[RMDB]
Source information:
An RNA of 177 nucleotides, treated with DMS and 2A3 and read out base by base. The reactions ran in a buffer of 150 mM KOAc, 10 mM MgCl2 and 150 mM bicine (pH 8.5), at 24 C. Values are in units of 0.01, from 0 to 300, in steps of 10.

RNA sequence: GGGAACGACUCGAGUAGAGUCGAAAAGGACGGGCUACAUCUGCCCUACAGAUCAGGCGCUCUGGACGCGGUGGUAUGCAUAGCGGUGCUGCACCAUAUCAGCAGCGAGACGCGGCGGGUGCGGCUGCCCACAGACAAACUUCGGUUUGUCUGUGGGAAAAGAAACAACAACAACAAC
Reactivity to DMS in 0.01 (KOAc 150mM, MgCl2 10mM, bicine 150mM(pH8.5), 24C), signal-to-noise 2, nucleotides 027 to 126: g000g020a140c170g010g050g010c040u020a070c200a080u000c060u010g000c010c030c010u010a160c090a070g000a090u010c090a120g020g010c060g010c030u010c020u000g020g000a110c110g000c070g010g040u000g020g000u000a030u000g020c030a060u010a070g000c040g010g040u000g000c040u000g010c050a040c060c020a060u020a100u010c080a170g000c040a030g010c010g000a090g000a100c070g010c060g000g010c030g020g000g020u010g000c010g000g000c010u010g000
Reactivity to 2A3 in 0.01 (KOAc 150mM, MgCl2 10mM, bicine 150mM(pH8.5), 24C), signal-to-noise 2, nucleotides 027 to 126: g070g030a020c100g000g040g000c020u120a050c080a170u070c080u100g010c030c000c000u010a030c020a020g070a080u090c040a050g100g100c010g000c020u000c010u080g110g000a070c050g020c040g070g010u030g020g050u130a070u150g040c120a070u060a070g070c060g080g090u050g010c030u020g010c020a040c010c020a030u040a030u260c010a060g030c010a010g020c040g010a080g000a020c110g010c010g000g020c050g030g040g000u040g000c020g050g020c000u020g050

The data come from the RNA Mapping Database (RMDB), library OK2TRN.